RNA sequence: GGGAACGACUCGAGUAGAGUCGAAAAGCGUACUACAGAACAGGUGGAGGACAUGAAACUGAGAUAGCUACGCAUCCCAAAUAGGAUGCGUCGAAACAGUUUCAACAGCCUCCAUAUUGGUUCUGUAUCGCAAAAGUUACAGAUUCGUCUGUAACAACGUAAACGGAAGAUUCGUCUUCCGUUUACGAAAAGAAACAACAACAACAAC
Reactivity to DMS in 0.01 (KOAc 150mM, MgCl2 10mM, bicine 150mM(pH8.5), 24C), signal-to-noise 2, nucleotides 027 to 156: g000c010g020u000a060c070u000a000c000a020g010a040a070c010a060g000g060u000g020g000a010g000g000a090c070a300u010g000a030a020a020c010u000g040a060g010a250u020a110g030c030u010a080c000g000c000a000u000c000c030c020a030a110a250u020a050g000g020a040u010g010c000g000u010c060g010a140a240a270c020a000g010u000u000u010c010a000a050c090a140g030c000c000u000c000c030a000u000a010u000u000g040g000u000u000c000u000g020u010a010u000c010g000c010a120a050a050a150g000u010u000a000c010a020g020a100u000u010c300g000u000c000u000g000u000a010a020c000a070a080
Reactivity to 2A3 in 0.01 (KOAc 150mM, MgCl2 10mM, bicine 150mM(pH8.5), 24C), signal-to-noise 3, nucleotides 027 to 156: g010c010g030u070a060c030u010a000c030a000g000a000a020c010a020g100g000u010g000g000a010g000g050a050c040a210u050g010a000a000a000c010u020g000a020g040a280u150a090g110c030u000a000c010g000c000a000u000c000c010c030a240a260a050u260a080g000g000a000u000g000c000g000u000c010g040a010a010a050c000a000g000u000u010u020c000a030a010c020a000g070c000c000u000c000c020a000u000a010u000u020g020g000u010u000c000u000g000u010a000u130c000g000c000a010a030a100a090g000u000u000a000c000a000g000a020u020u140c140g040u000c120u010g000u000a010a000c000a010a010
Source: RMDB library RNAMAK, as collected in RNAgym. This 207-nucleotide RNA was probed chemically with DMS and 2A3. Values cover nucleotides 27 to 156. 2A3 adducts were read by reverse transcription with SuperScript II with manganese. The reactions ran in a buffer of 150 mM KOAc, 10 mM MgCl2 and 150 mM bicine (pH 8.5), at 24 C.